This 177-nucleotide RNA was probed chemically with DMS and 2A3. High 2A3 reactivity points to a flexible backbone, as in loops and unpaired stretches. The DMS profile rests on 26,998 reads. The 2A3 profile rests on 20,128 reads.
[RMDB]
RNA sequence: GGGAACGACUCGAGUAGAGUCGAAAAGACACCGGCGUGGCGGCGCUGCGCUGGCGCCACGGCGCGAUGGGCUCGAUCAACGUCACCAUGCUGACCUAUCCGCAGAACCUGGAAGGCUCCAUCACCAAAUCCCUAAUUUAUUCGUAAAUUAGGGAUUAAAAGAAACAACAACAACAAC
Reactivity to DMS in 0.01 (KOAc 150mM, MgCl2 10mM, bicine 150mM(pH8.5), 24C), signal-to-noise 9, nucleotides 027 to 126: g000a110c060a100c080c010g010g010c020g040u000g010g030c040g010g010c070g010c030u010g010c100g010c070u000g010g010c020g010c020c020a070c080g010g010c030g020c050g010a070u000g010g000g010c030u000c060g010a090u000c070a070a080c070g000u010c050a080c050c050a070u000g010c040u000g000a100c050c040u000a080u010c040c030g010c060a070g000a070a090c060c030u000g000g010a110a100g000g010c020u000c020c040a080u010c060a110c070c060a090
Reactivity to 2A3 in 0.01 (KOAc 150mM, MgCl2 10mM, bicine 150mM(pH8.5), 24C), signal-to-noise 8, nucleotides 027 to 126: g050a010c020a010c060c020g040g010c010g030u020g040g010c060g030g080c050g000c060u100g020c070g030c090u050g040g020c010g010c020c010a040c030g050g030c030g010c040g050a100u080g020g040g010c030u030c050g050a100u080c050a060a060c030g030u020c020a020c070c010a060u100g010c020u040g040a070c000c010u060a090u070c010c010g020c040a040g040a110a070c000c020u060g010g040a040a020g060g000c010u010c020c010a070u050c020a030c070c010a020